[RMDB]
RNA sequence: GGGAACGACUCGAGUAGAGUCGAAAAGAUAUGGAGCGCACAUUCCGUGCGAUCGGAAACGAUCGAACUACACGACAUGUGAACUACGCUCCUAAGUCAAAUCUACCUUUCUUCGGAAAGGUAGAAAGUACACAUAGACGUUCGCGUCUAUGUGUACAAAAGAAACAACAACAACAAC
Reactivity to DMS in 0.01 (KOAc 150mM, MgCl2 10mM, bicine 150mM(pH8.5), 24C), signal-to-noise 3, nucleotides 027 to 126: g000a020u000a300u010g000g000a010g020c030g000c010a010c010a000u000u000c120c010g040u010g010c000g000a000u010c010g000g000a150a090a170c010g030a010u010c000g000a060a070c130u010a300c010a020c020g020a090c140a020u010g000u000g010a100a060c190u020a300c050g020c000u000c000c000u020a010a070g010u020c050a060a100a180u000c000u000a010c000c010u000u000u000c000u000u010c200g040g000a020a000a000g000g000u000a010g000a000a010a090
Reactivity to 2A3 in 0.01 (KOAc 150mM, MgCl2 10mM, bicine 150mM(pH8.5), 24C), signal-to-noise 4, nucleotides 027 to 126: g020a000u060a020u110g010g010a000g000c020g040c030a000c010a010u280u210c190c020g020u020g000c020g000a000u020c000g030g010a060a010a020c020g000a010u000c020g000a080a100c140u300a070c280a010c030g260a070c030a120u020g040u010g020a110a110c110u190a050c290g010c000u000c000c000u000a050a010g020u010c020a010a010a210u050c000u010a010c000c000u040u000u000c010u050u050c130g210g010a000a000a000g000g020u000a000g000a000a000a000

Notes: This 177-nucleotide RNA was probed chemically with DMS and 2A3. 2A3 adducts were read by reverse transcription with SuperScript II with manganese. For DMS the reverse transcriptase was MarathonRT.